RNA sequence: GGGAACGACUCGAGUAGAGUCGAAAAGGAUAUGAUGAAAUGGCAAUAAUGUUUUGUGACACCCAGUCUGAUCUUCGUGAUUGAUUUGCCAUAUUUUCUGAUCCAAACGGCUGGCUUCGGCCAGCCGCAAAUUAUGCACGUUCGCGUGCAUAAUUUGAAAAGAAACAACAACAACAAC
Reactivity to 2A3 in 0.01 (KOAc 150mM, MgCl2 10mM, bicine 150mM(pH8.5), 24C), signal-to-noise 2, nucleotides 027 to 126: g010g000a020u050a040u130g050a030u020g030a030a060a030u000g020g000c020a010a050u120a110a050u190g160u090u230u210u200g140u090g020a000c010a050c000c030c010a010g000u040c030u060g020a030u030c040u080u070c200g120u110g110a050u020u010g020a050u000u080u010g000c010c010a000u020a070u070u110u000u000c000u040g080a030u000c020c000a040a090a030c000g010g000c020u010g000g000c000u030u050c070g100g040c030c010a000g020c020c000g000
Reactivity to DMS in 0.01 (KOAc 150mM, MgCl2 10mM, bicine 150mM(pH8.5), 24C), signal-to-noise 3, nucleotides 027 to 126: g000g000a030u000a090u000g000a020u000g010a030a090a010u000g000g000c000a020a020u010a090a100u000g010u000u000u010u010g020u000g010a050c020a050c040c040c020a280g010u000c020u010g000a040u000c030u010u010c160g010u010g010a050u000u000g010a090u000u000u000g010c010c000a020u000a070u000u000u000u000c010u010g000a100u000c020c020a100a110a300c040g010g000c010u000g000g020c000u000u010c220g040g010c000c000a000g000c000c000g020
Annotation: The record gives the reactivity of an RNA of 177 nucleotides to 2A3 and DMS. For 2A3, 1,993 sequencing reads were counted. 2A3 adducts were read by reverse transcription with SuperScript II with manganese. For DMS, 3,669 sequencing reads were counted. The RNA was probed in 150 mM KOAc, 10 mM MgCl2 and 150 mM bicine (pH 8.5) at 24 C. DMS adducts were read by reverse transcription with MarathonRT.